RNA sequence: GGGAACGACUCGAGUAGAGUCGAAAAGAUAUGGAUGGAGCCAACACUAGACUAUCACUUCGGAAACGAAGUGACGAAUCUAGUGUUGGCUAUGAAGUCCUAAGUCAAAGGGACGUUCGCGUCCCAAGCUCGUUUACAUGUUCGCAUGUAAACGAGCAAAAGAAACAACAACAACAAC
Reactivity to DMS in 0.01 (KOAc 150mM, MgCl2 10mM, bicine 150mM(pH8.5), 24C), signal-to-noise 1, nucleotides 027 to 126: g000a010u020a300u020g000g000a000u000g020g020a060g050c000c000a010a000c000a010c000u000a010g000a010c070u010a300u000c000a000c000u000u010c010g010g000a180a070a190c000g030a010a010g000u010g020a000c030g000a030a160u000c000u000a010g030u000g020u000u000g000g030c050u010a000u010g000a140a270g000u000c010c040u000a090a140g000u000c000a040a120a220g000g000g000a000c030g040u010u000c190g020c030g020u000c000c000c000a010a030